RNA sequence: GGGAACGACUCGAGUAGAGUCGAAAACAGGCCUGUGCGUCAGAUGUGGCGGGCGAUCCAGCGGUCACAAGCCUGGUGCUGGACCUCGUCGGGGCCAUCUGCAGCGGCACCACCCCGGGAGGCGCGAACGUCCCGUCACGUUCGCGUGACGGGACGUAAAAGAAACAACAACAACAAC
Reactivity to DMS in 0.01 (KOAc 150mM, MgCl2 10mM, bicine 150mM(pH8.5), 24C), signal-to-noise 2, nucleotides 027 to 126: c150a120g020g020c060c020u010g020u000g010c060g020u010c070a050g030a010u000g030u000g020g010c020g010g000g000c100g020a070u010c020c020a040g000c010g000g000u010c000a080c190a100a170g000c050c050u010g010g010u030g010c000u000g010g010a050c040c030u000c000g010u020c040g010g030g000g020c220c020a070u020c020u010g000c120a150g000c040g000g010c020a040c080c050a150c050c010c000c030g050g020g000a090g010g010c040g010c040g020a080
Reactivity to 2A3 in 0.01 (KOAc 150mM, MgCl2 10mM, bicine 150mM(pH8.5), 24C), signal-to-noise 1, nucleotides 027 to 126: c020a010g140g010c000c000u120g000u090g060c030g080u100c020a020g020a050u060g120u110g080g000c040g000g010g030c040g040a080u010c000c000a030g000c020g100g010u170c040a060c020a210a080g020c020c030u150g090g070u100g000c020u000g000g040a050c000c000u030c000g070u020c030g020g060g050g000c040c020a020u080c000u050g050c030a090g140c010g090g000c040a010c030c020a060c000c010c020c040g040g000g020a020g000g000c010g000c000g010a030
Structure probing data (DMS and 2A3) for a 177-nucleotide construct. The 2A3 profile rests on 1,222 reads. It was measured as part of the RMDB library OK2TST. For DMS, 1,527 sequencing reads were counted. The reactions ran in a buffer of 150 mM KOAc, 10 mM MgCl2 and 150 mM bicine (pH 8.5), at 24 C.